[RMDB]
Conditions: 150 mM KOAc, 10 mM MgCl2 and 150 mM bicine (pH 8.5), 24 C.
Structure probing data (2A3) for a 207-nucleotide construct.
Reactivities are given for positions 27 through 156.
Source: RMDB library M2RFPK, as collected in RNAgym.
RNA sequence: GGGAACGACUCGAGUAGAGUCGAAAAGUGAACGAACUCGGUUGUUUCUCUGAAGGCAUGAUCACCCCGUCCGAUGCGGAAGUUCGUGCUUCCGUCGAACGCGAAAGUCGGACGGCGGCCAUGAGUCAAUAUGUUUAAGGCUUCGGCCUUAAACAAAUCGACAAUUGGGUUUCGACCCAAUUGUCGAAAAAGAAACAACAACAACAAC
Reactivity to 2A3 in 0.01 (KOAc 150mM, MgCl2 10mM, bicine 150mM(pH8.5), 24C), signal-to-noise 1, nucleotides 027 to 156: g100u090g090a020a060c030g000a050a000c010u020c120g000g000u000u060g030u030u020u000c030u040c020u050g100a090a040g170g000c000a000u000g000a010u030c070a010c000c000c000c000g000u000c000c000g000a000u020g000c010g000g020a010a010g030u290u300c210g070u300g030c000u000u000c010c000g030u020c020g050a110a020c120g060c030g090a100a080a000g000u000c000g000g000a000c000g000g000c000g010g000c010c000a010u020g000a000g040u060c020a000a130u130a020u300g000u000u000u000a010a000g010g010c000u070u080c200g130g010c010c000u000u000a000a000a000c030a030a020a000